Structure probing data (2A3) for a 207-nucleotide construct.
Values cover nucleotides 27 to 156.
Source: RMDB library VIROID, as collected in RNAgym.
The reactions ran in a buffer of 150 mM KOAc, 10 mM MgCl2 and 150 mM bicine (pH 8.5), at 24 C.
[RMDB]
RNA sequence: GGGAACGACUCGAGUAGAGUCGAAAAGUUGCGGACCUCGCCCGGAGUCUUCUCGACCAGCGCAGGUUCUGACGCGACCGGUGGCAUCACCGAGUUGCUCAAGCCUCAACCGCCUUUUUCUCUAUUCUGCGCUUGGUCUCCGGGCGAGGGUGUUUAGCAUGCAUCAUACGUUCGCGUAUGAUGCAUGAAAAGAAACAACAACAACAAC
Reactivity to 2A3 in 0.01 (KOAc 150mM, MgCl2 10mM, bicine 150mM(pH8.5), 24C), signal-to-noise 1, nucleotides 027 to 156: g170u170u260g000c010g010g020a150c000c000u020c000g020c000c000c000g080g020a020g080u080c210u220u060c210u300c150g020a000c000c010a000g000c010g030c010a030g000g010u020u020c050u050g000a010c160g000c000g020a010c000c000g000g000u020g000g200c230a210u300c030a300c000c000g040a180g030u000u000g020c000u000c010a000a000g000c000c010u230c180a220a240c000c010g050c020c030u020u160u100u070u070c120u000c010u060a150u210u100c110u140g000c000g050c040u110u260g000g010u010c000u010c010c010g000g040g000c000g000a000g010g000g010u000g000u000u000u050a030g000